[RMDB]
RNA sequence: GGGAACGACUCGAGUAGAGUCGAAAAGCGACGACGUUCGCGUCGUCGCAAAAUAACGCAGGCGUGGCACAACGCCAGAGAUAAACUCAAAUAGUCCCAAUAAAAUCUCACGGUUCGCCGUGAGAAACGCUUAUUAACAGUUCGCUGUUAAUAAGCGAAAAGAAACAACAACAACAAC
Reactivity to 2A3 in 0.01 (KOAc 150mM, MgCl2 10mM, bicine 150mM(pH8.5), 24C), signal-to-noise 3, nucleotides 027 to 126: g010c010g010a000c000g040a000c030g040u070u150c200g010c010g050u020c000g020u020c010g030c000a010a000a000a000u030a010a010c090g040c070a040g000g000c020g020u020g070g130c160a030c050a260a020c030g000c000c000a010g000a000g000a020u180a110a210a100c030u040c050a000a040a070u040a040g070u040c000c010c000a010a000u090a030a030a000a050u020c000u000c000a000c000g010g050u030u060c220g030c090c000g000u000g000a000g000a010a010a000
Reactivity to DMS in 0.01 (KOAc 150mM, MgCl2 10mM, bicine 150mM(pH8.5), 24C), signal-to-noise 3, nucleotides 027 to 126: g020c000g000a020c000g010a010c020g030u020u000c210g020c010g040u000c000g020u000c000g030c000a000a040a030a050u000a070a140c190g020c170a090g020g000c000g000u000g020g040c150a060c120a100a050c020g000c000c000a050g000a080g010a140u000a030a120a160c050u000c050a070a110a070u010a090g010u000c010c000c000a100a130u010a070a120a080a160u000c010u000c000a000c020g000g010u000u010c210g020c010c000g020u000g000a000g000a000a030a080